RNA sequence: GGGAACGACUCGAGUAGAGUCGAAAAGCAGAAUUCGUUCUGCGCAAAGAUAUGGACAUCUACCCACCUUUACUCUGCGAAGAACGUGAAUCGGAAACGAUUCACGGGAGCAGAGCGGAAGAGGAUGUCCUAAGUCAUGACCAGAGUUCGCUCUGAAUACUUAAACCUUAUUCGUAAGGUUUAAGUAAAAAGAAACAACAACAACAAC
Reactivity to DMS in 0.01 (KOAc 150mM, MgCl2 10mM, bicine 150mM(pH8.5), 24C), signal-to-noise 5, nucleotides 027 to 156: g020c000a040g010a030a070u000u000c260g030u000u000c020u040g030c010g020c100a100a120a110g010a090u000a280u000g020g000a040c010a020u010c020u000a090c060c010c070a300c090c010u000u010u000a040c010u000c020u000g000c010g000a120a120g000a110a130c000g010u000g000a010a000u010c000g010g000a110a100a190c000g020a020u000u000c000a010c000g010g000g000a180g010c010a010g000a010g040c000g000g020a020a050g010a250g050g000a030u000g010u010c000c010u000a000a060g010u000c020a100u010g010a140c040c010a030g000a090g010u000u000c070g010c200u000c000u040g000a140a290
Reactivity to 2A3 in 0.01 (KOAc 150mM, MgCl2 10mM, bicine 150mM(pH8.5), 24C), signal-to-noise 4, nucleotides 027 to 156: g000c010a000g010a040a020u110u120c170g080u120u000c010u000g010c020g000c040a090a140a080g070a040u090a040u150g000g000a010c000a000u010c010u110a270c030c020c020a070c010c010u020u030u020a040c020u000c000u000g030c030g130a300a070g000a080a020c000g010u010g000a000a000u000c010g020g000a030a020a020c000g000a000u000u000c000a000c000g000g000g000a000g000c010a000g010a000g010c050g190g010a030a020g030a040g070g000a000u000g000u000c000c000u000a020a000g010u020c030a080u220g110a130c100c010a020g000a010g040u140u170c180g070c110u020c010u050g060a070a080
Source: RMDB library RNAMAK, as collected in RNAgym. The record gives the reactivity of an RNA of 207 nucleotides to DMS and 2A3. For DMS the reverse transcriptase was MarathonRT. The RNA was probed in 150 mM KOAc, 10 mM MgCl2 and 150 mM bicine (pH 8.5) at 24 C. Reactivities are given for positions 27 through 156. 2A3 adducts were read by reverse transcription with SuperScript II with manganese.